Structure probing data (DMS and 2A3) for a 177-nucleotide construct.
The RNA was probed in 150 mM KOAc, 10 mM MgCl2 and 150 mM bicine (pH 8.5) at 24 C.
DMS adducts were read by reverse transcription with MarathonRT.
Source: RMDB libraries RFM100 and RFMREP, as collected in RNAgym.
For 2A3 the reverse transcriptase was SuperScript II with manganese.

[RMDB]
RNA sequence: GGGAACGACUCGAGUAGAGUCGAAAAACGCACCGAUAUGGUACGCCAUAUCGGUGCGACGUCGAUACUGUGAUCUCACCCGCAAGUCGGCCGUGCACUCGCAGGUGAGAUGAUAGCAUUGAAGGAAUACCAUUAUCGGUUUCGACCGAUAAUGGUAAAAAGAAACAACAACAACAAC
Reactivity to DMS in 0.01 (KOAc 150mM, MgCl2 10mM, bicine 150mM(pH8.5), 24C), signal-to-noise 2, nucleotides 027 to 126: a130c010g020c030a000c000c010g030a020u010a000u000g000g000u010a080c290g030c000c010a020u000a010u000c000g000g040u000g010c000g010a000c070g010u000c000g010a020u000a020c010u010g010u010g000a010u000c000u000c000a010c010c010c030g000c000a050a010g000u010c120g030g010c110c160g010u030g000c150a030c000u000c060g000c010a040g030g010u010g000a010g020a000u000g000a010u000a000g000c030a000u000u010g010a030a150g000g010a110a160
Reactivity to 2A3 in 0.01 (KOAc 150mM, MgCl2 10mM, bicine 150mM(pH8.5), 24C), signal-to-noise 5, nucleotides 027 to 126: a010c020g010c010a000c020c010g000a000u000a000u010g040g000u070a040c300g040c060c000a000u010a000u000c000g010g000u000g000c000g000a000c000g050u030c010g000a000u010a050c010u010g000u000g080a000u000c000u000c000a010c000c000c000g000c020a030a000g030u050c040g090g070c110c100g130u160g020c040a010c020u020c020g000c010a010g010g000u000g000a000g000a000u010g020a000u010a000g020c030a030u010u050g050a060a030g090g070a090a090